RNA sequence: GGGAACGACUCGAGUAGAGUCGAAAACUUAGUUGUAAAAGUGGUUUUACACUAACGGGGUCUCCAUCAUCCACAUGUAUCGACGGUAAAUGGAAUCCCAUACUCCCAACAUGUGUACGAUCUAACGAAAAAUUUGAUCCAGUGGAUGAUGGUCCCGCAAAGCCAAUGGAUUCGUCCAUUGGCUUUGAAAAGAAACAACAACAACAAC
Reactivity to DMS in 0.01 (KOAc 150mM, MgCl2 10mM, bicine 150mM(pH8.5), 24C), signal-to-noise 2, nucleotides 027 to 156: c040u000u010a040g020u000u010g020u020a000a010a120a160g000u000g020g030u000u000u000u000a050c030a070c010u010a050a090c050g000g020g040g000u000c120u000c070c000a020u000c000a060u000c000c000a140c000a110u000g010u000a090u000c000g000a090c110g040g030u000a050a100a060u000g010g000a100a120u000c080c040c020a100u000a060c060u010c000c030c030a090a090c060a070u010g000u000g030u000a050c000g020a030u000c020u000a060a160c040g000a070a030a080a100a300u000u010u000g000a020u000c000c030a100g010u000g030g000a030u000g000a020u000g040g020u010c000c010c010g000
Reactivity to 2A3 in 0.01 (KOAc 150mM, MgCl2 10mM, bicine 150mM(pH8.5), 24C), signal-to-noise 3, nucleotides 027 to 156: c010u040u010a020g020u040u070g020u050a020a070a030a080g050u120g070g080u080u040u030u080a010c030a020c020u060a040a070c010g010g000g000g000u030c060u000c100c000a000u000c000a000u000c000c010a010c010a120u040g030u000a070u070c050g040a040c080g050g070u090a060a100a100u080g020g030a080a080u060c020c020c000a000u020a020c020u020c000c020c010a020a040c100a090u150g030u020g030u030a040c070g010a050u030c050u100a070a050c040g240a060a010a020a080a160u100u180u130g000a000u020c020c020a000g010u000g030g010a000u000g000a000u000g000g000u010c010c000c000g000